Record summary
The record gives the reactivity of an RNA of 170 nucleotides to DMS and 2A3. The 2A3 profile rests on 8,974 reads. DMS adducts were read by reverse transcription with MarathonRT. Reactivities are given for positions 27 through 129.
RNA sequence: GGGAACGACUCGAGUAGAGUCGAAAACUAAUGCUUAUAUGCGCACUACACAUACUGAUAUUGGUGUCUACAUUAGUAUGUCACUUGUAUUAGUCAUUGUAGUGAAGAGAUUGUACAACCCAUCACUGACCUGGUCGGUUCGCCGACCAGAAAAGAAACAACAACAACAAC
Reactivity to DMS in 0.01 (KOAc 150mM, MgCl2 10mM, bicine 150mM(pH8.5), 24C), signal-to-noise 5, nucleotides 027 to 129: c050u040a100a060u020g000c060u060u020a060u020a080u080g040c120g010c070a000c030u010a060c020a050c150a050u020a050c030u000g010a010u020a000u000u030g060g020u050g020u020c020u010a000c020a140u060u070a130g020u000a030u130g040u030c020a030c020u000u050g030u000a000u000u000a020g000u000c140a030u030u010g030u000a050g040u010g020a050a070g030a130g000a140u020u080g040u010a050c110a030a060c090c000c010a070u020c120a140c040u040g020a090c190
Reactivity to 2A3 in 0.01 (KOAc 150mM, MgCl2 10mM, bicine 150mM(pH8.5), 24C), signal-to-noise 5, nucleotides 027 to 129: c030u100a050a040u140g010c020u080u120a010u050a000u300g080c030g000c010a000c000u000a000c000a000c000a000u060a010c000u000g020a000u000a000u020u060g000g000u010g000u020c000u020a020c000a180u160u020a120g030u020a010u230g030u010c000a000c000u020u010g030u010a000u000u000a000g000u020c030a020u000u010g020u000a010g000u000g000a050a000g060a010g030a010u040u180g030u040a040c030a070a050c030c000c000a020u070c040a030c050u040g050a050c000
Record summary: The reactions ran in a buffer of 150 mM KOAc, 10 mM MgCl2 and 150 mM bicine (pH 8.5), at 24 C.